RNA sequence: GGGAACGACUCGAGUAGAGUCGAAAAACCACUACUUCGGUAGUGGUAAAAAGCGUACUACAAGAGCGACGAUCGUGACACUCCCUUAUCCCAAAUAGGAUAACCAGUGUUCACGGGAGCUCUUGUAUCGCAAAAAAACGUAGAUUCGUCUACGUAACUGUUUGUAGGAGUUCGCUCCUACAAACAGAAAAGAAACAACAACAACAAC
Reactivity to DMS in 0.01 (KOAc 150mM, MgCl2 10mM, bicine 150mM(pH8.5), 24C), signal-to-noise 1, nucleotides 027 to 156: a040c000c000a030c000u000a010c010u000u010c230g040g020u000a000g100u000g010g040u000a000a030a040a070a030g010c020g020u020a050c120u010a010c010a000a000g000a000g000c000g020a090c240g000a100u000c020g010u020g010a050c010a020c010u020c070c010c020u000u000a000u000c000c000c030a040a090a190u010a100g000g040a030u000a010a020c010c020a010g040u000g020u000u000c010a020c050g020g000g010a160g030c000u000c000u000u000g000u000a010u010c010g000c000a000a010a050a070a030a160a030c000g040u000a000g000a060u000u000c300g070u010c030u000a020c000g000u000a030a180
Reactivity to 2A3 in 0.01 (KOAc 150mM, MgCl2 10mM, bicine 150mM(pH8.5), 24C), signal-to-noise 3, nucleotides 027 to 156: a000c010c000a000c000u010a000c000u040u050c120g120g000u000a000g000u010g000g000u040a070a030a000a010a010g060c060g030u100a100c040u000a000c040a000a000g010a000g020c000g250a300c010g020a030u020c000g000u000g010a000c000a000c000u000c020c000c000u000u000a000u020c010c020c040a150a300a240u240a130g000g000a000u010a020a010c100c030a030g000u000g120u290u130c010a000c000g000g000g000a000g000c000u020c000u010u000g000u000a000u010c000g000c000a120a090a000a000a000a000a000c000g010u000a010g000a010u020u060c230g070u000c140u000a000c000g000u010a070a050